RNA sequence: GGGAACGACUCGAGUAGAGUCGAAAAGACAGCUCUGCCAUGGCUCGCUCAAAAUCCUCGUUAGUCAACAUAGGACCUCGUUCUUGUGCAGAGAUGCUUGUAACACUACCAAGAAGCACCAUGGUAAGAUCUAUGGUGAGUUCGCUCACCAUAGAUCAAAAGAAACAACAACAACAAC
Reactivity to 2A3 in 0.01 (KOAc 150mM, MgCl2 10mM, bicine 150mM(pH8.5), 24C), signal-to-noise 2, nucleotides 027 to 126: g090a000c030a000g040c010u030c020u050g020c000c000a010u000g040g010c070u070c150g020c020u050c090a080a080a020a070u060c020c010u020c020g040u030u090a050g090u110c070a010a040c010a090u150a040g000g060a030c000c100u030c040g050u090u030c020u020u060g040u040g000c000a020g010a000g010a050u060g020c010u040u030g010u030a080a020c050a020c130u080a050c050c000a070a000g050a020a010g040c020a020c020c000a020u010g000g040u030a050a040
Reactivity to DMS in 0.01 (KOAc 150mM, MgCl2 10mM, bicine 150mM(pH8.5), 24C), signal-to-noise 3, nucleotides 027 to 126: g000a130c180a140g020c030u000c030u020g000c020c000a080u000g000g000c120u010c200g000c050u010c110a080a030a090a130u000c040c010u010c180g000u010u000a150g010u020c110a060a070c050a030u000a030g000g020a070c060c050u010c110g000u000u020c050u000u010g000u020g000c020a040g010a030g000a120u000g010c000u010u000g000u000a080a110c170a080c100u000a090c090c050a030a070g020a100a060g010c070a090c020c030a030u000g000g010u000a060a080